Structure probing data (2A3 and DMS) for a 177-nucleotide construct.
DMS (dimethyl sulfate) methylates the pairing face of unpaired adenines and cytosines.
Source: RMDB library OK2TST, as collected in RNAgym.
The DMS profile rests on 980 reads.
The RNA was probed in 150 mM KOAc, 10 mM MgCl2 and 150 mM bicine (pH 8.5) at 24 C.
RNA sequence: GGGAACGACUCGAGUAGAGUCGAAAAGCACUAUUGUCGGAUCUGUCUAGCUAAUAAAAUUGGUCAUUUGAGUAACUGUAUCACAGUUGAAUUACAGAAAAGAGCAAGAGUGAAGUAAAUUCAAAUGGCAUAUCUACGAGUUCGCUCGUAGAUAUGCAAAAGAAACAACAACAACAAC
Reactivity to 2A3 in 0.01 (KOAc 150mM, MgCl2 10mM, bicine 150mM(pH8.5), 24C), signal-to-noise 1, nucleotides 027 to 126: g050c010a000c040u000a040u000u110g020u010c000g060g010a020u000c000u020g090u050c060u070a010g030c060u110a030a070u090a040a220a110a120u100u070g030g030u000c030a090u050u030u130g070a050g060u090a030a010c000u000g020u080a160u290c100a020c020a070g000u010u020g040a030a060u110u050a030c000a000g110a000a060a000a030g050a010g000c010a010a050g000a000g050u040g020a080a000g030u120a050a080a020u150u100c050a010a000a160u050g090
Reactivity to DMS in 0.01 (KOAc 150mM, MgCl2 10mM, bicine 150mM(pH8.5), 24C), signal-to-noise 2, nucleotides 027 to 126: g010c040a060c050u010a030u020u010g000u000c010g010g000a270u020c030u010g030u000c020u000a140g010c060u010a030a110u020a050a080a060a300u010u010g020g010u030c060a060u020u020u000g000a110g020u010a000a030c010u010g010u000a110u010c150a070c060a040g010u000u000g010a080a080u010u040a020c050a010g010a040a060a140a220g000a120g030c020a020a030g010a070g020u000g000a040a060g000u000a040a050a050u000u020c030a050a020a050u000g010